[RMDB]
RNA sequence: GGGAACGACUCGAGUAGAGUCGAAAAGAUAUGGAGAACUACUUCAAGGGCGCGUGUAAGGAUCGGAAACGAUCUAUCACGCACAUGCCUCAGAAGCUCCUAAGUCAAAGCACCGUUCGCGGUGCAAUCCUGAUUAUACCUUCGGGUAUAAUCAGGAAAAAGAAACAACAACAACAAC
Reactivity to DMS in 0.01 (KOAc 150mM, MgCl2 10mM, bicine 150mM(pH8.5), 24C), signal-to-noise 2, nucleotides 027 to 126: g050a010u000a300u000g000g010a020g000a130a050c080u030a300c010u000u000c000a090a210g000g000g030c020g000c010g030u000g010u000a070a280g000g000a030u000c000g000g020a060a100a220c000g020a000u020c010u000a290u000c010a020c040g020c010a060c230a140u020g010c000c000u000c040a180g000a050a020g000c010u000c000c000u010a030a120g000u000c020a010a090a120g010c000a010c010c010g020u000u000c230g000c000g000g000u000g000c000a030a020
Reactivity to 2A3 in 0.01 (KOAc 150mM, MgCl2 10mM, bicine 150mM(pH8.5), 24C), signal-to-noise 2, nucleotides 027 to 126: g010a030u100a040u190g050g020a040g010a060a070c100u220a040c020u300u000c010a070a080g010g030g000c020g000c000g020u020g020u080a300a280g120g000a010u010c010g030g020a100a070a020c020g000a000u000c010u000a050u040c000a010c000g130c000a010c010a020u150g000c000c010u080c010a020g010a000a000g000c000u010c000c000u040a220a010g040u030c060a210a040a000g000c000a000c000c020g010u060u090c300g020c020g120g020u000g000c020a000a020
This 177-nucleotide RNA was probed chemically with DMS and 2A3. Reactivities are given for positions 27 through 126. For DMS the reverse transcriptase was MarathonRT. The reactions ran in a buffer of 150 mM KOAc, 10 mM MgCl2 and 150 mM bicine (pH 8.5), at 24 C.